RNA sequence: GGGAACGACUCGAGUAGAGUCGAAAAUUAACGUCAAUGUUGGAGAGCUAUUUGCAAGGUACCUAAUUGUUUGAUUAUUGAUUCUCAAUUGGUCCCCUCCAAGUAGCUCUAUUGCAUUGUAAAUGAGCUAUCUAGACUACUUCGGUAGUCUAGAUAGAAAAGAAACAACAACAACAAC
Reactivity to 2A3 in 0.01 (KOAc 150mM, MgCl2 10mM, bicine 150mM(pH8.5), 24C), signal-to-noise 4, nucleotides 027 to 126: u080u020a070a000c050g050u020c030a000a010u010g010u020u070g080g020a010g000a010g020c000u000a000u000u000u000g010c030a030a010g000g010u020a010c010c000u170a020a040u020u020g090u120u080u140g050a040u020u190a090u170u230g190a140u200u010c010u000c010a000a000u000u000g000g000u020c030c020c000c000u010c000c000a000a000g000u000a000g010c000u000c000u000a010u000u030g000c000a000u000u010g020u060a020a100a130u170g060a020g080
Reactivity to DMS in 0.01 (KOAc 150mM, MgCl2 10mM, bicine 150mM(pH8.5), 24C), signal-to-noise 5, nucleotides 027 to 126: u010u010a070a150c140g010u010c010a010a020u000g000u000u000g010g010a020g000a010g010c000u000a010u010u000u010g010c290a030a040g010g000u000a020c010c000u000a020a020u000u000g010u000u000u000g000a040u010u010a240u010u000g010a120u000u000c030u000c000a000a010u000u010g010g010u010c080c020c000c030u010c300c000a010a020g010u000a010g000c010u010c000u000a030u010u000g010c000a010u000u000g010u010a050a050a080u010g020a130g020